The record gives the reactivity of an RNA of 177 nucleotides to DMS and 2A3. It was measured as part of the RMDB library OK2TST. The reactions ran in a buffer of 150 mM KOAc, 10 mM MgCl2 and 150 mM bicine (pH 8.5), at 24 C. The 2A3 profile rests on 1,336 reads.
RNA sequence: GGGAACGACUCGAGUAGAGUCGAAAACGUAGCUCAUCAAACCGAGCUUGGGCGGCAACAUCUUUCCGGUGCGCGACCGGGUGCCUUCGAUGGACCAGCUCAGGUUGAACCGCUUCUCGACCACGUACAGGGAUCAUGAUUUCGAUCAUGAUCCCUGAAAAGAAACAACAACAACAAC
Reactivity to DMS in 0.01 (KOAc 150mM, MgCl2 10mM, bicine 150mM(pH8.5), 24C), signal-to-noise 2, nucleotides 027 to 126: c090g000u010a050g010c010u000c060a110u000c050a060a060a100c130c040g000a020g000c000u000u030g040g000g000c040g000g000c010a070a130c060a100u000c110u000u000u000c040c010g030g010u000g040c240g000c140g010a280c010c030g000g000g020u000g030c020c020u000u030c300g010a180u010g030g010a060c020c000a110g030c000u010c010a050g020g010u000u010g000a100a110c190c140g000c000u000u000c040u000c040g010a160c100c030a030c160g010u000a170
Reactivity to 2A3 in 0.01 (KOAc 150mM, MgCl2 10mM, bicine 150mM(pH8.5), 24C), signal-to-noise 2, nucleotides 027 to 126: c020g030u070a010g030c040u010c090a130u040c040a100a060a100c070c080g000a000g020c000u080u120g020g000g000c030g040g000c040a000a040c000a270u010c050u040u150u030c030c060g000g010u010g080c240g020c050g070a010c010c000g020g000g050u040g040c050c000u180u240c030g050a060u190g030g160a030c040c000a010g000c000u000c030a050g020g000u020u020g000a030a020c030c020g000c120u040u010c030u040c010g110a070c000c000a040c000g110u100a070